The record gives the reactivity of an RNA of 177 nucleotides to 2A3 and DMS. Reactivities are given for positions 27 through 126. The reactions ran in a buffer of 150 mM KOAc, 10 mM MgCl2 and 150 mM bicine (pH 8.5), at 24 C. The data come from the RNA Mapping Database (RMDB), library OK1LIB.
[RMDB]
RNA sequence: GGGAACGACUCGAGUAGAGUCGAAAAAGACAGCACAGUUGUUACCAAAAACAAAACCUGGCAGAUGGUCCUAGGUCAGGAUUAGUGGUCAUUCUCUGGUCUUCUCCAGACUGGUGACACAGGGUGGGCGUGGACCUCUCUUCGGAGAGGUCUACGCAAAAGAAACAACAACAACAAC
Reactivity to 2A3 in 0.01 (KOAc 150mM, MgCl2 10mM, bicine 150mM(pH8.5), 24C), signal-to-noise 5, nucleotides 027 to 126: a000g080a020c050a040g060c060a030c050a190g040u040u020g050u040u050a080c040c000a100a070a010a030a050c110a000a080a000a040c000c000u000g010g000c050a010g040a160u100g070g020u070c020c020u060a040g110g000u040c030a000g000g030a040u030u090a090g110u070g100g040u010c030a050u290u060c050u000c000u030g030g010u040c010u240u060c040u200c010c010a000g000a090c050u080g070g000u050g040a020c020a010c040a070g090g050g040u140g030g060
Reactivity to DMS in 0.01 (KOAc 150mM, MgCl2 10mM, bicine 150mM(pH8.5), 24C), signal-to-noise 4, nucleotides 027 to 126: a120g000a050c030a030g010c070a110c120a100g000u000u000g000u000u000a100c030c040a040a070a020a080a030c140a070a040a090a110c040c010u000g020g000c030a100g020a090u020g000g000u000c000c000u040a200g010g000u000c040a000g010g020a070u000u000a050g000u000g000g010u000c050a020u010u030c240u010c010u000g000g010u020c300u030u000c100u020c020c030a050g010a010c100u010g000g020u000g000a050c040a050c050a080g000g000g000u040g000g000